[RMDB]
RNA sequence: GGGAACGACUCGAGUAGAGUCGAAAAGAAAUACAUGCGAACUGUCGAAAGCAUGGAAAGAAAGAAAAAGAGUGAAAUCGACAGAGAAAUAAGCGAGCGAGCGAGCGAAAUAAACUCUUGAAAGAAAGGGAAACAUUAUCUUCGGAUAAUGUUUCCCAAAAGAAACAACAACAACAAC
Reactivity to 2A3 in 0.01 (KOAc 150mM, MgCl2 10mM, bicine 150mM(pH8.5), 24C), signal-to-noise 2, nucleotides 027 to 126: g060a000a240a000u120a020c000a000u000g010c030g040a140a130c030u020g040u100c010g070a200a060a000g000c000a000u050g000g090a080a000a000g170a050a100a020g100a070a070a000a020a020g000a000g020u090g000a000a000a220u130c000g000a000c000a000g070a000g080a000a000a180u120a110a090g080c000g050a040g010c080g080a020g060c010g040a000g050c030g120a010a090a000u250a060a010a000c000u000c000u000u020g040a010a010a010g090a170a160a040
Reactivity to DMS in 0.01 (KOAc 150mM, MgCl2 10mM, bicine 150mM(pH8.5), 24C), signal-to-noise 1, nucleotides 027 to 126: g040a110a150a070u030a230c000a010u000g000c000g000a190a070c020u000g000u000c050g000a000a180a240g000c000a000u000g000g000a060a110a140g030a150a000a190g040a070a140a050a090a020g000a010g020u000g000a000a020a050u000c010g000a010c010a000g000a300g010a070a090a020u000a020a300g000c060g000a130g000c140g000a060g000c020g030a080g000c070g010a010a020a050u020a020a210a040c000u000c000u000u000g010a110a120a060g050a010a050a020
Description:
This 177-nucleotide RNA was probed chemically with 2A3 and DMS. For DMS, 1,410 sequencing reads were counted. DMS (dimethyl sulfate) methylates the pairing face of unpaired adenines and cytosines. Conditions: 150 mM KOAc, 10 mM MgCl2 and 150 mM bicine (pH 8.5), 24 C. For 2A3, 852 sequencing reads were counted.